[RMDB]
RNA sequence: GGGAACGACUCGAGUAGAGUCGAAAAGAUAUGGACAGAACUACAAGGACGAAACCAGCUAUGAAGUUUUUUGCUCGGAAACGAGCAAAAAAUGGAGCUGACUGACGGUACUUGCUGUCCUAAGUCAGAAUAUCACACACUUCGGUGUGUGAUAUUCAAAAGAAACAACAACAACAAC
Reactivity to DMS in 0.01 (KOAc 150mM, MgCl2 10mM, bicine 150mM(pH8.5), 24C), signal-to-noise 1, nucleotides 027 to 126: g020a070u010a300u000g010g000a010c000a010g000a110a020c020u000a300c020a030a020g000g020a300c060g030a180a200a080c210c000a020g000c000u000a210u010g000a170a170g000u000u040u000u000u000u000g000c000u010c010g000g000a010a160a150c010g000a000g010c010a000a000a000a000a000a000u010g000g010a020g000c020u000g000a070c190u000g050a240c140g010g000u030a150c040u000u000g000c040u000g000u020c000c000u000a040a030g010u000c060a210